[RMDB]
RNA sequence: GGGAACGACUCGAGUAGAGUCGAAAAUGUCGUUCGCAGUUGUUUUAGUCGCUUUGGACUUUUGACCACGGAUGUACUGGCACUGGUGUUAAGAGCGAUAUGAGGAAGGUCGGUGCAAUAUUGCCCCAAGGAUGUACACGUUCGCGUGUACAUCCUUAAAAGAAACAACAACAACAAC
Reactivity to 2A3 in 0.01 (KOAc 150mM, MgCl2 10mM, bicine 150mM(pH8.5), 24C), signal-to-noise 1, nucleotides 027 to 126: u080g030u000c030g000u000u010c020g000c120a000g010u050u060g000u050u060u000u070a000g000u000c040g010c020u000u060u120g020g020a050c050u110u060u020u040g080a070c000c000a000c080g030g040a080u080g060u070a020c000u030g000g070c000a000c000u010g040g180u030g000u030u040a020a000g040a030g000c000g000a030u030a220u170g060a030g060g090a030a020g130g030u050c040g030g000u040g030c020a050a050u150a190u190u190g010c000c000c000c000
Reactivity to DMS in 0.01 (KOAc 150mM, MgCl2 10mM, bicine 150mM(pH8.5), 24C), signal-to-noise 1, nucleotides 027 to 126: u020g000u000c000g010u000u010c000g050c050a100g020u010u000g000u060u000u030u040a040g000u010c080g000c030u000u010u000g000g030a130c030u000u020u000u000g000a070c050c000a030c040g030g030a180u000g020u000a060c210u040g000g000c000a020c000u000g000g020u000g070u040u000a130a190g000a070g070c060g000a030u000a020u050g010a130g030g010a100a040g030g010u010c140g090g000u020g010c030a040a120u010a010u030u040g030c010c020c040c080
An RNA of 177 nucleotides, treated with 2A3 and DMS and read out base by base. The data come from the RNA Mapping Database (RMDB), library RFM100. For DMS the reverse transcriptase was MarathonRT. For 2A3, 423 sequencing reads were counted.